Annotation:
Conditions: 150 mM KOAc, 10 mM MgCl2 and 150 mM bicine (pH 8.5), 24 C. Chemical mapping of a 177-nucleotide RNA with 2A3 and DMS. DMS adducts were read by reverse transcription with MarathonRT. For 2A3, 3,810 sequencing reads were counted. The data come from the RNA Mapping Database (RMDB), library VIROID.
RNA sequence: GGGAACGACUCGAGUAGAGUCGAAAAAGGAGUAAUCCUAAACAGGGUUUUCACCCUUCCUUUAGUUUCCUUCCUCUCCUGGAGAGGUCUUCUGCCCUAGCCCGGUCUUCGAAGCUUCCUUUGGCUACGAAGUAUAAAUCUUCGGAUUUAUACUUCGAAAAGAAACAACAACAACAAC
Reactivity to 2A3 in 0.01 (KOAc 150mM, MgCl2 10mM, bicine 150mM(pH8.5), 24C), signal-to-noise 3, nucleotides 027 to 126: a000g010g010a030g000u050a030a050u040c000c010u020a010a010a040c300a030g050g020g020u030u100u290u300c140a060c000c010c000u020u030c000c010u040u030u020a000g010u000u030u020c000c000u040u090c010c000u020c000u030c000c130u130g010g080a070g000a020g020g020u000c010u070u040c040u050g020c000c000c020u030a040g010c020c030c030g060g060u020c050u060u050c100g050a040a020g040c010u080u040c010c000u110u100u090g040g000c010u030a040
Reactivity to DMS in 0.01 (KOAc 150mM, MgCl2 10mM, bicine 150mM(pH8.5), 24C), signal-to-noise 4, nucleotides 027 to 126: a040g010g000a020g000u000a040a050u010c120c010u000a020a030a040c210a020g020g000g020u000u010u000u010c220a090c010c000c000u000u010c040c010u010u000u000a040g000u000u000u000c000c000u000u000c010c010u000c020u000c020c120u000g010g000a050g000a060g010g000u000c030u000u000c070u000g020c030c010c030u000a110g000c030c020c140g010g010u000c070u000u000c070g010a080a120g010c100u000u000c020c020u000u000u010g020g000c080u000a150